[RMDB]
RNA sequence: GGGAACGACUCGAGUAGAGUCGAAAAUUAUGGAUAAAUCUGGGAGUAAAAUGUAUCUACUCGAAGAACAACAAACACAAUCGAAAGGAGACUACAUCUUGAUUUGCGCCGGAUGCAGAUCAAAAGUACUUGAUUCAUUCUUCGGAAUGAAUCAAGUAAAAGAAACAACAACAACAAC
Reactivity to 2A3 in 0.01 (KOAc 150mM, MgCl2 10mM, bicine 150mM(pH8.5), 24C), signal-to-noise 4, nucleotides 027 to 126: u060u020a060u130g080g000a020u050a130a170a090u020c030u030g020g030g070a060g060u100a030a040a100a070u190g050u030a110u030c010u020a030c010u000c050g080a090a040g040a070a030c020a050a050c070a010a220a000c110a000c030a100a100u070c060g080a070a040a070g080g070a040g030a030c030u050a050c060a070u060c050u050u050g000a030u010u000u030g020c030g010c000c120g090g010a020u080g000c000a000g000a010u000c010a000a030a020a020g030u020
Reactivity to DMS in 0.01 (KOAc 150mM, MgCl2 10mM, bicine 150mM(pH8.5), 24C), signal-to-noise 2, nucleotides 027 to 126: u000u000a040u000g010g010a080u070a170a110a170u010c030u000g000g000g060a090g000u050a000a030a020a060u000g060u010a170u000c030u000a020c000u000c000g000a120a020g030a120a120c090a140a120c130a110a080a020c180a010c140a080a050u000c080g010a040a040a070g000g000a060g050a130c080u000a020c140a180u050c020u000u000g020a040u000u000u000g000c080g000c030c080g000g000a040u020g000c000a000g000a000u000c010a000a020a160a070g000u000